[RMDB]
RNA sequence: GGGAACGACUCGAGUAGAGUCGAAAAGAUAUGGAUUGUCACGUCGAAGAACUACUAGAUCAUCGGAAACGAUUCCCUAGUAGGGAGACGCGACAAUCCUAAGUCAAAAGCCAGCUUCGGCUGGCAACACAUUCCUGAGGUUCGCCUCAGGAAUGUGAAAAGAAACAACAACAACAAC
Reactivity to 2A3 in 0.01 (KOAc 150mM, MgCl2 10mM, bicine 150mM(pH8.5), 24C), signal-to-noise 2, nucleotides 027 to 126: g010a010u030a030u070g010g000a000u010u010g000u020c010a010c050g000u000c030g110a300a080g000a070a000c000u000a000c000u020a030g000a050u200c070a040u040c170g020g050a040a000a000c010g030a010u300u300c110c040c000u010a010g010u010a010g050g010g000a030g000a000c010g000c020g000a010c010a000a000u030c000c000u000a000a010g000u020c000a000a000a110a190g020c000c000a010g000c010u050u110c170g200g020c000u000g030g000c000a000a000
Reactivity to DMS in 0.01 (KOAc 150mM, MgCl2 10mM, bicine 150mM(pH8.5), 24C), signal-to-noise 2, nucleotides 027 to 126: g030a020u000a080u030g010g030a020u010u000g010u010c000a000c020g060u000c000g050a060a150g010a130a220c010u000a000c000u010a020g020a210u000c250a020u000c000g000g000a030a000a080c000g000a020u000u010c240c100c020u000a010g020u000a000g000g020g000a040g000a020c000g020c040g000a000c000a010a040u000c000c000u000a010a070g000u010c040a090a080a150a110g000c000c000a010g000c010u000u010c200g010g000c010u010g050g000c000a020a080
The data come from the RNA Mapping Database (RMDB), library TTRDEL.
An RNA of 177 nucleotides, treated with 2A3 and DMS and read out base by base.
Conditions: 150 mM KOAc, 10 mM MgCl2 and 150 mM bicine (pH 8.5), 24 C.